This 177-nucleotide RNA was probed chemically with DMS. The DMS profile rests on 1,138 reads. Reactivities are rounded to 0.1 and cut off at 0 and 3. Source: RMDB library TTRINS, as collected in RNAgym. The RNA was probed in 150 mM KOAc, 10 mM MgCl2 and 150 mM bicine (pH 8.5) at 24 C.
[RMDB]
RNA sequence: GGGAACGACUCGAGUAGAGUCGAAAAGAUAUGGAUGUCUGGGCUCCUAGUACUUUUGACGGUAUGGGAGUCGGAAACGACUUCUUUGUAUACCGAUAAGUACAGGGAGCCCAGACAUCCUAAGUCACGCAUAGUUAUGGUUCGCCAUAACUAUGCGAAAAGAAACAACAACAACAAC
Reactivity to DMS in 0.01 (KOAc 150mM, MgCl2 10mM, bicine 150mM(pH8.5), 24C), signal-to-noise 2, nucleotides 027 to 126: g000a040u000a300u040g000g010a020u000g010u000c000u000g000g000g020c000u010c000c000u000a190g000u000a000c000u000u000u000u020g000a300c100g010g010u000a000u000g000g010g010a000g000u000c000g020g000a100a130a200c020g030a020c000u020u000c020u010u000u000g010u020a050u000a020c010c000g020a170u000a000a000g000u000a000c000a300g010g030g000a000g000c000c000c000a000g000a040c000a000u000c000c050u000a000a070g000u000c100a250